The record gives the reactivity of an RNA of 177 nucleotides to 2A3. Source: RMDB library OK1LIB, as collected in RNAgym.

RNA sequence: GGGAACGACUCGAGUAGAGUCGAAAAGAAAGUGCUUAAACCGUGUGGACGCGAAUGGCUAUAACCACCGAAACCUGAGGAAACAGGAAGCCACAACGCAAGCCAUGUGGUUUGCACACGGAAGAAAGACUGAUGGCUGAUUCGUCAGCCAUCAGUCAAAAGAAACAACAACAACAAC
Reactivity to 2A3 in 0.01 (KOAc 150mM, MgCl2 10mM, bicine 150mM(pH8.5), 24C), signal-to-noise 2, nucleotides 027 to 126: g170a030a040a020g030u070g010c090u090u170a000a020a080c000c000g040u020g030u000g000g000a020c040g010c000g000a070a050u020g000g000c000u050a020u040a110a080c080c000a030c070c000g190a250a000a140c000c000u020g020a180g020g170a260a020a000c000a010g030g000a060a000g000c000c000a000c020a090a160c010g030c060a160a000g140c000c000a000u080g010u000g000g000u060u000u030g000c010a000c000a000c020g150g020a000a030g070a050a100a000

Overview:
The RNA was probed in 150 mM KOAc, 10 mM MgCl2 and 150 mM bicine (pH 8.5) at 24 C. The 2A3 profile rests on 929 reads. For 2A3 the reverse transcriptase was SuperScript II with manganese.